[RMDB]
This 177-nucleotide RNA was probed chemically with 2A3 and DMS. Source: RMDB library M2PK50, as collected in RNAgym. The DMS profile rests on 1,236 reads. Conditions: 150 mM KOAc, 10 mM MgCl2 and 150 mM bicine (pH 8.5), 24 C. 2A3 adducts were read by reverse transcription with SuperScript II with manganese. 2A3 is a SHAPE reagent: it acylates the 2'-hydroxyl of flexible nucleotides of all four kinds.

RNA sequence: GGGAACGACUCGAGUAGAGUCGAAAAUCACUGGACUUCGGUCCAGUGAAAAAGAAAGAGGGACGGCGAACGUCAAACGCUGACGUACGAAAGUACGAAAAAAAAGUACGCCCUUCGGGGCGUACAAGUUAUAACCGUGGUUCGCCACGGUUAUAACAAAAGAAACAACAACAACAAC
Reactivity to 2A3 in 0.01 (KOAc 150mM, MgCl2 10mM, bicine 150mM(pH8.5), 24C), signal-to-noise 1, nucleotides 027 to 126: u000c000a000c010u010g000g000a000c000u030u040c220g080g000u010c010c010a000g000u000g000a000a010a020a000a010g090a000a020a000g070a050g020g020g070a020c030g020g060c020g040a170a060c030g130u080c060a100a010a060c040g000c040u030g070a010c010g000u000a000c000g050a120a010a000g000u000a010c000g020a090a020a010a000a010a000a020a030g000u000a000c000g000c000c000c000u010u040c150g020g050g000g000c000g000u000a000c000a000a000
Reactivity to DMS in 0.01 (KOAc 150mM, MgCl2 10mM, bicine 150mM(pH8.5), 24C), signal-to-noise 2, nucleotides 027 to 126: u000c010a030c000u000g020g010a010c000u010u030c250g010g020u000c000c000a010g000u010g000a000a020a060a130a080g000a060a060a010g000a060g010g010g000a220c040g010g000c030g020a060a030c100g010u000c140a100a100a030c070g010c050u000g000a160c020g050u000a000c010g010a110a120a130g050u000a000c020g000a000a000a000a010a070a060a090a130g000u000a000c000g010c010c000c000u000u040c200g030g000g000g010c000g010u000a000c000a010a010